[RMDB]
RNA sequence: GGGAACGACUCGAGUAGAGUCGAAAAGCUUAAUAACCUGCGCUGAGCCCUUCUUCCCCAGCUUGCCUGUGUCCUAGGGAAUUGGAAGGUCAUCCUUCACAGGAUCGUGUGGAAGUCCUGCUCGGGGUCCAAACAUGGUAAUUCGUUACCAUGUUAAUGAUACGAAAAGGUUCGCCUUUUCGUAUCAAAAAGAAACAACAACAACAAC
Reactivity to 2A3 in 0.01 (KOAc 150mM, MgCl2 10mM, bicine 150mM(pH8.5), 24C), signal-to-noise 4, nucleotides 027 to 156: g000c020u090u150a100a020u110a220a230c000c010u070g030c070g020c060u050g030a020g010c000c020c020u030u030c020u010u000c000c000c000c010a000g070c050u100u190g040c020c020u020g010u050g020u110c020c080u060a050g000g020g060a100a100u120u090g060g040a090a030g080g030u110c010a080u090c010c000u060u040c010a020c000a040g030g010a070u080c040g060u050g020u080g110g010a030a020g020u040c020c010u020g020c010u020c030g030g020g030g010u030c030c040a060a030a000c000a000u000g000g020u020a020a010u060u040c040g040u020u000a000c000c000a000u000g000u000u000a000a010
Reactivity to DMS in 0.01 (KOAc 150mM, MgCl2 10mM, bicine 150mM(pH8.5), 24C), signal-to-noise 2, nucleotides 027 to 156: g000c060u010u000a090a110u010a100a070c040c030u000g020c030g000c040u010g000a170g010c000c020c030u000u000c020u000u020c000c000c020c050a090g020c060u000u000g020c050c020u010g030u010g010u000c030c040u000a080g010g020g020a070a140u010u000g040g020a050a070g020g040u000c060a090u010c040c020u000u000c090a080c040a070g010g000a030u000c070g010u000g000u000g020g020a110a080g020u000c050c010u000g010c050u000c060g000g020g020g000u000c040c060a130a030a010c000a000u000g040g000u000a010a080u000u010c290g030u000u000a000c000c000a000u000g010u000u000a020a140